[RMDB]
RNA sequence: GGGAACGACUCGAGUAGAGUCGAAAAUCGCCACCGCCGGGUGCCCAGGUGUCGUAUACGCCACCAAAGAACAUGGCCUUGAAGACCAGGAGCAAACAGCCAACGCCCAAGAGGAUUAGGUGAUAGCCCCUUAUUUAUAGUUCGCUAUAAAUAAGGGAAAAGAAACAACAACAACAAC
Reactivity to 2A3 in 0.01 (KOAc 150mM, MgCl2 10mM, bicine 150mM(pH8.5), 24C), signal-to-noise 3, nucleotides 027 to 126: u030c000g040c010c000a010c010c010g070c010c030g060g030g040u040g010c020c000c010a020g000g030u030g010u020c010g020u080a110u040a190c050g010c000c000a020c000c030a100a050a010g050a040a030c040a080u070g020g010c000c030u030u080g060a100a020g040a070c020c030a020g040g020a040g020c030a060a050a050c020a020g030c010c010a030a030c040g010c000c010c000a060a030g070a070g120g020a050u100u140a060g000g020u040g030a050u050a020g020c010
Reactivity to DMS in 0.01 (KOAc 150mM, MgCl2 10mM, bicine 150mM(pH8.5), 24C), signal-to-noise 5, nucleotides 027 to 126: u000c070g020c040c010a070c050c060g020c070c060g010g020g020u000g010c040c030c030a140g000g020u010g010u000c040g020u000a090u000a110c090g010c060c010a040c030c030a060a070a120g010a090a090c110a100u010g010g010c000c040u010u000g000a120a090g000a060c040c010a060g000g000a070g000c060a070a070a070c100a100g000c020c040a050a120c140g020c010c020c020a070a070g020a100g010g000a100u000u000a060g000g010u000g000a090u010a140g000c110